[RMDB]
RNA sequence: GGGAACGACUCGAGUAGAGUCGAAAACAUAGCGUUUCACAAUGUGCGCCAUUAACAUUGUUUAUGCAAGCACGUUUCUCAAUGUACGGCGCAGAAACAUUGCCAACACAAAUACGCUUCACGAUGUAAAACAUCGGUGCGUUCGCGCACCGAUGAAUCAGUAUCAGAACUUCGGUUCUGAUACUGAAAAAGAAACAACAACAACAAC
Reactivity to 2A3 in 0.01 (KOAc 150mM, MgCl2 10mM, bicine 150mM(pH8.5), 24C), signal-to-noise 6, nucleotides 027 to 156: c050a060u130a020g000c020g010u040u120u110c080a050c000a030a000u010g020u010g000c000g000c020c010a060u150u160a090a010c000a020u010u020g060u060u040u050a100u130g080c090a070a090g100c060a050c200g010u010u110u030c030u000c000a000a010u020g000u030a010c050g000g000c000g050c010a000g050a010a090a010c010a000u000u020g040c040c040a130a020c060a080c020a130a130a030u130a020c010g020c010u070u090c110a070c130g090a080u110g080u260a020a070a080a070c000a000u000c000g000g000u000g000c010g030u030u040c160g010c000g000c050a000c000c000g000a000u000g000a000a010
Reactivity to DMS in 0.01 (KOAc 150mM, MgCl2 10mM, bicine 150mM(pH8.5), 24C), signal-to-noise 2, nucleotides 027 to 156: c070a090u000a070g030c020g010u000u020u000c090a050c050a030a080u000g060u010g000c030g020c010c030a090u000u020a130a110c000a030u000u000g010u010u000u000a020u020g000c010a070a150g030c080a130c090g020u020u000u000c020u000c080a040a080u010g030u000a080c070g030g040c060g020c030a070g020a070a080a070c010a060u000u000g040c000c060a070a050c080a070c070a040a060a140u020a060c060g000c010u000u000c060a040c060g000a100u000g000u000a040a060a080a230c000a020u000c010g010g020u000g000c000g030u000u000c230g030c040g030c010a010c000c000g000a000u000g000a020a070